RNA sequence: GGGAACGACUCGAGUAGAGUCGAAAAUAGCCAGUUAUCUGCAAAUUUCACAUUUUCUGCGUAAUCUGGUGCUACUGAAAUGACUUUUGUACCUUUAUAGCGGACUUCUGUCAUAAAAUGUGCAUCCAUCAUGUUAGCGUUUCGACGCUAACAUGAUAAAAGAAACAACAACAACAAC
Reactivity to 2A3 in 0.01 (KOAc 150mM, MgCl2 10mM, bicine 150mM(pH8.5), 24C), signal-to-noise 1, nucleotides 027 to 126: u070a000g030c000c010a010g020u040u030a040u030c090u120g020c030a030a040a110u110u260u240c150a120c020a060u020u040u050u090c070u060g000c030g020u040a040a070u080c020u010g000g030u050g030c020u080a020c000u040g040a060a120a060u030g010a030c000u110u030u040u040g030u300a300c000c000u110u170u070a300u160a100g150c080g030g000a020c020u010u000c010u030g030u010c020a010u050a060a070a010a050u130g010u050g000c010a030u040c060c000
Reactivity to DMS in 0.01 (KOAc 150mM, MgCl2 10mM, bicine 150mM(pH8.5), 24C), signal-to-noise 3, nucleotides 027 to 126: u000a180g000c020c020a010g020u020u000a040u000c080u020g050c030a040a060a110u000u010u020c250a080c170a030u000u000u000u000c130u000g010c070g000u000a020a070u000c030u010g010g010u000g000c060u010a090c080u000g000a090a100a060u000g020a020c020u000u000u010u020g030u010a090c010c010u000u000u020a160u020a130g000c200g000g000a060c020u010u000c010u000g030u010c020a030u000a020a050a040a160u000g020u000g000c230a140u010c050c100